[RMDB]
RNA sequence: GGGAACGACUCGAGUAGAGUCGAAAACAUGGUGGCAAGUACGACGCGAUAUUGCGCCACCUGCAAUAGAAGCGUAGACAUCAACUGUAGCGAGAGCUACUCAACUUAUGGACCUUAGAGCAAGCGAAGACGACCGGUCCUGUCGGAAUUCGCUAGAAUAGCUAUCACCAUUCGUGGUGAUAGCUAUAAAAGAAACAACAACAACAAC
Reactivity to DMS in 0.01 (KOAc 150mM, MgCl2 10mM, bicine 150mM(pH8.5), 24C), signal-to-noise 2, nucleotides 027 to 156: c050a060u000g000g030u000g010g010c010a080a060g000u000a090c030g010a070c040g030c020g030a160u000a050u000u020g010c000g040c000c020a040c030c020u000g050c040a030a080u010a080g010a130a190g000c020g000u000a070g000a070c040a150u000c080a040a080c020u000g030u000a010g000c030g010a230g000a290g000c010u000a050c010u000c130a050a120c100u010u010a090u000g030g000a100c010c020u020u000a100g000a120g020c050a100a070g000c020g030a180a060g000a140c030g000a130c030c060g040g020u000c020c090u000g020u000c000g010g030a070a210u010u000c010g010c130u000a130g000a100
Reactivity to 2A3 in 0.01 (KOAc 150mM, MgCl2 10mM, bicine 150mM(pH8.5), 24C), signal-to-noise 3, nucleotides 027 to 156: c060a010u110g020g010u010g030g000c040a070a040g020u050a100c120g050a010c020g060c030g090a050u020a010u100u110g040c060g010c000c010a050c040c010u020g000c000a020a050u050a110g050a130a010g000c020g020u020a030g050a050c040a070u130c050a020a110c080u050g000u030a000g000c000g020a020g020a010g080c010u010a010c020u020c060a040a140c040u120u070a020u150g070g010a060c010c020u050u100a060g020a010g090c070a070a000g010c020g010a000a000g030a020c000g000a000c000c020g030g070u020c000c060u010g020u020c000g000g000a050a060u020u020c020g010c000u010a020g120a070